[RMDB]
RNA sequence: GGGAACGACUCGAGUAGAGUCGAAAAGUGCACGACUUCGGUCGUGCACAAAUAAAGGCAGUCGAGUGCGUACGGCACAGACAUACGCUGACGCCACGACAAAAAGUAACGUCUUCGGACGUUACAACUCAAUACGUCCCUUCGGGGACGUAUUGAGAAAAGAAACAACAACAACAAC
Reactivity to 2A3 in 0.01 (KOAc 150mM, MgCl2 10mM, bicine 150mM(pH8.5), 24C), signal-to-noise 2, nucleotides 027 to 126: g000u010g000c000a010c000g020a010c020u060u100c300g040g010u000c000g030u020g000c000a000c000a000a000a000u010a000a010a000g120g020c060a030g000u000c010g060a020g090u270g040c000g050u060a240c050g050g000c020a030c030a070g280a070c040a050u200a050c120g000c000u010g000a000c020g010c000c040a020c030g050a040c060a000a120a000a010a000g010u000a000a010c000g010u000c010u030u070c140g080g010a000c000g000u010u000a000c000a000a000
Reactivity to DMS in 0.01 (KOAc 150mM, MgCl2 10mM, bicine 150mM(pH8.5), 24C), signal-to-noise 2, nucleotides 027 to 126: g030u000g010c000a000c040g000a000c000u020u010c270g000g050u000c000g020u000g040c020a000c010a000a030a060u000a120a050a170g010g010c170a110g050u000c000g000a100g030u010g050c000g010u000a080c080g020g040c070a060c190a160g000a050c140a110u030a100c140g020c040u000g000a080c100g000c000c020a130c030g000a020c040a040a040a050a080a070g000u000a010a000c000g010u000c000u000u000c190g000g000a000c000g000u000u000a000c000a060a030